RNA sequence: GGGAACGACUCGAGUAGAGUCGAAAAGAUAUGGAGUUGUAGACAUGCUGGAGAAGGGUCGGAAACGACCCGUAACAGCAACAGCUACACCUCCUAAGUCAAAGGGCAACGGUUCGCCGUUGCCCAAGUUACUGUAAGACUUCGGUCUUACAGUAACAAAAGAAACAACAACAACAAC
Reactivity to 2A3 in 0.01 (KOAc 150mM, MgCl2 10mM, bicine 150mM(pH8.5), 24C), signal-to-noise 3, nucleotides 027 to 126: g040a030u050a050u200g000g000a000g010u000u000g020u010a010g030a070c050a160u100g020c010u000g020g010a030g010a040a030g010g010g010u010c010g030g010a050a050a020c030g000a010c010c020c000g000u010a000a010c000a000g030c000a030a010c040a020g050c000u000a000c000a000c000c010u000c010c010u020a120a010g050u040c050a050a080a140g000g000g000c000a000a010c010g000g080u050u120c300g040c150c000g000u000u000g000c000c000c000a010a000
Reactivity to DMS in 0.01 (KOAc 150mM, MgCl2 10mM, bicine 150mM(pH8.5), 24C), signal-to-noise 5, nucleotides 027 to 126: g010a050u000a300u000g010g000a030g000u000u010g000u000a010g000a060c080a210u000g020c000u010g000g020a110g010a140a190g000g010g010u000c000g010g000a080a120a230c000g020a000c010c010c000g000u000a040a200c000a000g000c000a020a050c300a140g010c000u000a000c000a010c040c000u000c000c010u000a030a090g000u000c030a070a160a140g010g010g010c010a000a000c020g010g010u000u020c180g010c000c000g030u000u000g000c000c000c000a020a010
An RNA of 177 nucleotides, treated with 2A3 and DMS and read out base by base.
For DMS the reverse transcriptase was MarathonRT.
For DMS, 5,137 sequencing reads were counted.
The RNA was probed in 150 mM KOAc, 10 mM MgCl2 and 150 mM bicine (pH 8.5) at 24 C.
Source: RMDB library TTRDEL, as collected in RNAgym.
2A3 adducts were read by reverse transcription with SuperScript II with manganese.
For 2A3, 12,539 sequencing reads were counted.